[RMDB]
RNA sequence: GGGAACGACUCGAGUAGAGUCGAAAAGAUAUGGACGACCUUUCCGAUAAGUUGCACUCGGAAACGAGUGGCAACUUUUGACGGAAAGGUCCUAAGUCAAACCCCACGUGGUUCGCCACGUGGGGAACAUUAGCUGUAUGUUCGCAUACAGCUAAUGAAAAGAAACAACAACAACAAC
Reactivity to 2A3 in 0.01 (KOAc 150mM, MgCl2 10mM, bicine 150mM(pH8.5), 24C), signal-to-noise 7, nucleotides 027 to 126: g040a050u210a120u300g100g030a040c060g010a010c020c000u000u000u000c000c010g040a060u020a080a010g000u010u010g010c010a000c000u000c000g030g050a070a060a040c020g000a010g020u060g140g100c010a000a010c010u000u010u010u030g050a010c010g000g000a000a010a010g000g000u000c000c000u010a020a010g010u010c040a090a050a300c000c010c000c000a000c000g000u010g000g060u060u080c220g060c120c010a000c000g000u000g000g010g000g000a000a000
Reactivity to DMS in 0.01 (KOAc 150mM, MgCl2 10mM, bicine 150mM(pH8.5), 24C), signal-to-noise 9, nucleotides 027 to 126: g000a120u010a110u010g010g010a150c250g010a020c010c000u000u000u000c000c000g010a160u000a010a010g000u000u000g010c000a040c000u000c000g000g000a110a080a170c010g000a010g010u000g010g010c000a010a010c000u000u000u000u010g010a200c110g000g000a010a010a010g010g000u000c000c020u000a060a220g000u000c060a090a120a200c010c000c000c000a010c000g020u000g000g010u010u010c270g010c000c000a000c000g030u000g010g000g000g010a000a010
About this RNA:
An RNA of 177 nucleotides, treated with 2A3 and DMS and read out base by base. Values cover nucleotides 27 to 126. The reactions ran in a buffer of 150 mM KOAc, 10 mM MgCl2 and 150 mM bicine (pH 8.5), at 24 C.